[RMDB]
RNA sequence: GGGAACGACUCGAGUAGAGUCGAAAAAACACCGCAACGCAGGAAAAGCGCAUGCUUAUCGGGACAACAACCCAACGCGGCAGGUGUACCGUUGGGCAAAACGUUUACUGGCGCGUUUCGAUUGAGGCUACCAAUUGUUCUUCGGAACAAUUGGUAGAAAAGAAACAACAACAACAAC
Reactivity to DMS in 0.01 (KOAc 150mM, MgCl2 10mM, bicine 150mM(pH8.5), 24C), signal-to-noise 3, nucleotides 027 to 126: a060a050c100a080c040c000g010c070a040a080c060g010c020a110g010g010a070a070a050a040g010c040g020c120a150u000g020c020u000u010a040u000c030g000g010g030a040c050a060a060c080a140a090c050c020c010a040a070c100g020c120g000g020c030a050g020g000u020g030u010a050c040c010g020u000u000g000g020g030c110a020a030a060a100c070g010u010u000u000a180c030u000g000g010c030g010c010g010u000u000u000c030g000a110u010u020g000a050g000g000
Reactivity to 2A3 in 0.01 (KOAc 150mM, MgCl2 10mM, bicine 150mM(pH8.5), 24C), signal-to-noise 2, nucleotides 027 to 126: a000a000c070a020c010c010g060c050a020a030c040g020c020a030g030g060a060a080a010a010g040c030g020c050a020u080g000c010u060u000a020u110c020g020g000g030a020c020a100a010c020a030a050c060c000c020a070a100c060g030c120g070g000c030a060g000g220u120g040u080a080c060c010g000u010u020g040g050g050c000a040a070a020a010c020g020u060u030u050a050c030u070g190g000c040g020c030g010u030u050u030c020g030a040u040u120g080a070g090g000